[RMDB]
RNA sequence: GGGAACGACUCGAGUAGAGUCGAAAAUGUAGGGCGCACGGCGGAUGCCUUGGCACAGGAAGCCGAUGAAGGACGCGGCAAGCUGCGAUAAUCCGCGGUUAGGGGCACACACCCUUCGACCCGCGGGAUAGAAUGACGAUUUCGAUCGUCAUUCUAUAAAAGAAACAACAACAACAAC
Reactivity to 2A3 in 0.01 (KOAc 150mM, MgCl2 10mM, bicine 150mM(pH8.5), 24C), signal-to-noise 7, nucleotides 027 to 126: u170g020u070a070g010g030g000c020g000c030a030c060g050g030c020g040g030a050u080g020c000c010u020u050g050g000c030a020c020a050g060g050a090a010g010c010c020g010a020u100g060a070a060g090g030a020c050g000c000g040g000c030a040a040g030c030u040g010c010g010a010u070a130a050u050c000c000g010c000g010g000u010u030a020g010g000g020g030c040a020c000a010c000a040c120c010c000u100u170c050g020a020c010c000c020g000c010g000g000g000
Reactivity to DMS in 0.01 (KOAc 150mM, MgCl2 10mM, bicine 150mM(pH8.5), 24C), signal-to-noise 9, nucleotides 027 to 126: u020g030u010a050g010g010g010c080g020c060a060c090g010g000c020g010g010a100u010g020c030c050u000u000g010g010c040a080c110a130g000g010a110a100g010c020c020g000a070u020g010a140a070g000g000a110c080g000c040g010g000c050a060a140g000c050u000g000c050g010a110u020a090a090u030c010c000g000c000g000g000u010u010a110g000g000g000g000c090a120c200a110c280a160c040c000c010u000u020c070g020a080c300c010c020g000c010g000g000g000
This 177-nucleotide RNA was probed chemically with 2A3 and DMS.
The RNA was probed in 150 mM KOAc, 10 mM MgCl2 and 150 mM bicine (pH 8.5) at 24 C.
Reactivities are given for positions 27 through 126.